[RMDB]
RNA sequence: GGGAACGACUCGAGUAGAGUCGAAAAAUGUCAGAAGGAAUGUGGAUCCCUCACCCCUUAUUCUAGGGUUUGCACCCUAGGUCUGCCUGUGAACACAGUCCCCAUGGAGGCCUGAGUUGGUGGCUUUGUCAUAGUUUCCCACCCUGUGGAACUGGCACUAAUUAAUCGGGUUCGCCCGAUUAAUUAGAAAAGAAACAACAACAACAAC
Reactivity to 2A3 in 0.01 (KOAc 150mM, MgCl2 10mM, bicine 150mM(pH8.5), 24C), signal-to-noise 1, nucleotides 027 to 156: a000u110g050u090c040a020g040a080a010g090g010a060a090u130g020u050g040g000a110u030c010c000c000u050c010a020c020c010c020c020u020u090a050u120u070c020u030a030g000g030g000u030u060u140g050c080a050c010c020c000u000a020g010g010u010c010u050g030c030c000u090g020u040g140a160a010c020a000c000a060g010u030c060c030c000c030a040u100g030g020a050g050g020c000c060u120g070a040g060u040u060g030g020u080g010g000c020u040u000u020g000u030c020a020u010a140g020u020u010u060c030c010c010a010c040c000c000u020g050u090g080g000a050a040c010u020g000g000c010a000
Reactivity to DMS in 0.01 (KOAc 150mM, MgCl2 10mM, bicine 150mM(pH8.5), 24C), signal-to-noise 2, nucleotides 027 to 156: a100u010g020u010c050a110g020a130a060g030g030a050a060u020g040u000g000g010a110u000c040c010c040u000c020a140c050c030c000c020u000u010a070u020u020c030u000a030g000g000g020u000u000u010g020c160a300c010c000c010u000a010g020g010u020c040u010g000c050c000u000g010u020g000a050a160c050a060c040a080g010u010c050c010c020c000a090u020g010g020a080g040g020c000c030u000g010a110g020u000u010g020g020u010g010g000c090u000u000u000g020u000c050a060u000a090g000u000u000u000c010c020c000a110c060c070c030u020g010u000g010g000a070a050c030u000g010g030c040a300
Source: RMDB library OK3TST, as collected in RNAgym.
Structure probing data (2A3 and DMS) for a 207-nucleotide construct.
In probing experiments dimethyl sulfate is read out at A N1 and C N3, which are open when not base-paired.
DMS adducts were read by reverse transcription with MarathonRT.
For 2A3, 792 sequencing reads were counted.